RNA sequence: GGGAACGACUCGAGUAGAGUCGAAAAGAAUCUGAGGUGGUACGGAUUUCAGGUGGAGUAUUCGUAUACGGGAUCGUAGAUUAUGGUGAAGAGGGUGAUUCCAUCCAUUUCUUCCUAAUUGUCGUAACAGUAUAGGCCACUUCGGUGGCCUAUACUGAAAAGAAACAACAACAACAAC
Reactivity to 2A3 in 0.01 (KOAc 150mM, MgCl2 10mM, bicine 150mM(pH8.5), 24C), signal-to-noise 1, nucleotides 027 to 126: g110a040a030u080c100u140g020a020g060g020u050g030g010u040a000c000g020g080a060u080u000u230c100a160g070g060u300g090g050a000g120u120a090u070u080c000g010u110a000u070a120c000g000g040g100a090u110c020g030u100a020g000a090u050u230a040u290g000g180u190g000a000a130g000a010g040g000g000u000g020a130u080u070c170c000a020u000c070c000a000u040u000u000c060u000u000c000c010u000a040a000u000u160g070u000c000g000u000a100a000
Reactivity to DMS in 0.01 (KOAc 150mM, MgCl2 10mM, bicine 150mM(pH8.5), 24C), signal-to-noise 1, nucleotides 027 to 126: g000a110a050u000c070u000g010a080g010g060u000g000g000u100a000c050g000g000a000u000u060u000c130a010g000g080u070g000g010a000g000u000a080u000u100c070g000u000a000u000a090c130g000g000g070a070u000c090g000u000a170g050a030u000u040a000u000g000g010u020g020a000a030g060a060g000g060g000u000g070a300u000u000c070c020a000u020c110c000a070u000u000u000c080u000u000c000c000u030a030a030u000u000g000u070c220g000u000a240a270